[RMDB]
RNA sequence: GGGAACGACUCGAGUAGAGUCGAAAAACCCUAUCGGUCUCUAGCAAGGUGCCUGUAUCGCGCUAUAGACUGUCAACUAGAACAGGAUCGUAAAGCGGCACACUCAGGGUUGUUUUACUAAACUUAACUGAGAUCGCCAACCACGUCCUGCCCGUUGGAUUUAUAGUGCGUUCGCGCACUAUAAAUCAAAAGAAACAACAACAACAAC
Reactivity to DMS in 0.01 (KOAc 150mM, MgCl2 10mM, bicine 150mM(pH8.5), 24C), signal-to-noise 1, nucleotides 027 to 156: a170c010c010c010u000a100u000c010g050g000u000c010u000c080u010a010g010c070a090a200g000g030u000g030c060c080u000g040u000a060u000c020g040c070g010c010u000a070u010a070g000a050c020u000g030u000c020a090a100c000u000a120g040a050a070c000a010g000g010a050u000c060g050u010a000a120a070g030c050g010g000c050a120c070a230c030u010c010a050g000g000g010u010u000g010u000u000u000u000a210c190u010a070a040a000c010u000u000a070a190c010u000g000a030g020a190u020c250g030c050c030a120a070c060c100a070c030g020u000c000c020u000g000c020c030c050g010u000u000g000
Reactivity to 2A3 in 0.01 (KOAc 150mM, MgCl2 10mM, bicine 150mM(pH8.5), 24C), signal-to-noise 4, nucleotides 027 to 156: a000c060c000c000u090a170u140c020g010g020u000c010u000c020u040a000g030c020a080a080g070g020u060g070c050c120u170g100u180a080u090c060g020c010g010c070u000a010u000a010g010a010c000u000g020u030c020a010a040c050u090a030g040a110a020c000a000g000g010a070u300c080g040u060a020a000a050g010c030g000g000c030a010c000a010c050u000c000a010g080g020g000u170u010g020u000u050u020u120a130c150u180a040a020a020c010u140u260a020a020c010u000g020a000g020a100u080c030g000c000c000a010a010c010c020a000c000g000u000c000c010u000g020c010c050c030g020u010u050g060